[RMDB]
The data come from the RNA Mapping Database (RMDB), library OK3TST. This 207-nucleotide RNA was probed chemically with 2A3. The reactions ran in a buffer of 150 mM KOAc, 10 mM MgCl2 and 150 mM bicine (pH 8.5), at 24 C. 2A3 adducts were read by reverse transcription with SuperScript II with manganese.
RNA sequence: GGGAACGACUCGAGUAGAGUCGAAAACAGUGGGCAAUUUGCCAUCUUUACCUGCAUAGUCAUCGGCCGUUCAAUUUGUUCGCAUAGUAGGUACGUCUACUGUCAUAGUAAUUUACCGGCAAAUAUGCAGUUUUUACCGGUAUCUGUACUUACGUUGCGCAUCUGAAUGAUUCGUCAUUCAGAUGCGAAAAGAAACAACAACAACAAC
Reactivity to 2A3 in 0.01 (KOAc 150mM, MgCl2 10mM, bicine 150mM(pH8.5), 24C), signal-to-noise 2, nucleotides 027 to 156: c040a060g030u120g020g040g000c010a120a160u050u100u200g000c030c000a080u040c050u030u170u070a040c020c000u000g040c040a050u080a120g110u100c040a100u060c100g100g010c010c000g070u080u040c030a030a070u060u150u220g050u000u030c020g000c110a030u030a120g020u000a020g000g030u030a090c020g030u030c000u000a010c010u030g050u090c070a090u070a070g080u040a040a010u000u030u000a000c000c050g000g000c010a000a040a010u180a070u190g080c080a070g050u060u040u040u010u100a000c000c010g000g030u020a010u010c030u100g090u050a040c000u030u020a000c030g070u060u100g100